[RMDB]
RNA sequence: GGGAACGACUCGAGUAGAGUCGAAAACCUGACAUCUUACUUGGCAGCAUUCGAUGUGUUUCCAUAUUCAAAUACUGCCUGGUAAUGAUGCCAGUAAAACAGAAGAAUUGGUUCGCCAAUUCUUCUGGAUAGUACACAGCUUCGGCUGUGUACUAUCAAAAGAAACAACAACAACAAC
Reactivity to DMS in 0.01 (KOAc 150mM, MgCl2 10mM, bicine 150mM(pH8.5), 24C), signal-to-noise 3, nucleotides 027 to 126: c070c010u000g000a070c000a000u000c010u000u000a010c000u010u000g010g000c000a010g010c010a000u000u000c080g010a020u000g030u010g000u000u010u010c300c040a030u000a030u000u010c010a010a010a010u000a030c000u010g020c010c000u000g010g000u000a000a010u000g020a010u000g010c010c010a030g010u010a050a070a080a300c000a010g000a010a000g000a020a010u000u000g000g000u000u010c270g020c000c000a010a010u000u000c000u000u000c000u000g000
Reactivity to 2A3 in 0.01 (KOAc 150mM, MgCl2 10mM, bicine 150mM(pH8.5), 24C), signal-to-noise 3, nucleotides 027 to 126: c000c000u000g010a010c000a000u020c000u010u010a010c000u020u000g000g000c000a000g000c000a020u000u030c040g020a020u020g040u010g060u090u300u060c120c010a020u050a070u090u100c010a010a020a000u020a030c000u000g000c000c000u000g010g000u020a030a030u210g010a000u010g000c000c000a060g020u130a020a150a010a030c010a010g000a000a000g000a000a000u010u010g030g030u060u100c210g050c100c000a000a000u000u010c000u000u000c000u000g000
Source: RMDB library RFMREP, as collected in RNAgym. An RNA of 177 nucleotides, treated with DMS and 2A3 and read out base by base. Conditions: 150 mM KOAc, 10 mM MgCl2 and 150 mM bicine (pH 8.5), 24 C.